RNA sequence: GGGAACGACUCGAGUAGAGUCGAAAAGAACAGACUGCCGCACUGGCUGCCCUGAUGAGAACACACCCAUGACUAGCGUCGAAACAUCAACAGUGCGGGCUGUUGGUGUCGGGAGCCACUAAAAGAACCCUAGUAGCGUGUUCGCACGCUACUAGGGAAAAGAAACAACAACAACAAC
Reactivity to DMS in 0.01 (KOAc 150mM, MgCl2 10mM, bicine 150mM(pH8.5), 24C), signal-to-noise 2, nucleotides 027 to 126: g000a230a070c180a070g000a070c020u010g000c000c030g020c070a120c080u000g000g000c060u070g000c000c000c030u000g010a020u050g000a190g000a060a070c120a120c150a140c100c030c000a110u030g000a010c020u000a010g000c140g020u000c020g020a130a150a050c070a000u010c000a000a020c020a000g000u000g040c100g000g000g060c000u000g020u000u010g000g010u020g000u000c100g040g000g000a080g000c050c120a010c170u070a020a080a080a130g000a060a120
Reactivity to 2A3 in 0.01 (KOAc 150mM, MgCl2 10mM, bicine 150mM(pH8.5), 24C), signal-to-noise 1, nucleotides 027 to 126: g030a050a070c050a010g110a010c000u010g000c060c000g000c000a060c050u050g030g000c020u010g030c000c000c000u100g140a150u150g050a100g040a160a060c050a020c010a080c000c100c000a080u040g030a030c040u090a020g000c000g030u010c030g050a160a000a000c030a020u030c000a020a120c030a040g050u140g200c030g020g020g000c000u000g010u030u000g000g020u040g010u060c020g020g000g000a020g070c010c000a080c010u100a050a000a030a030g180a000a050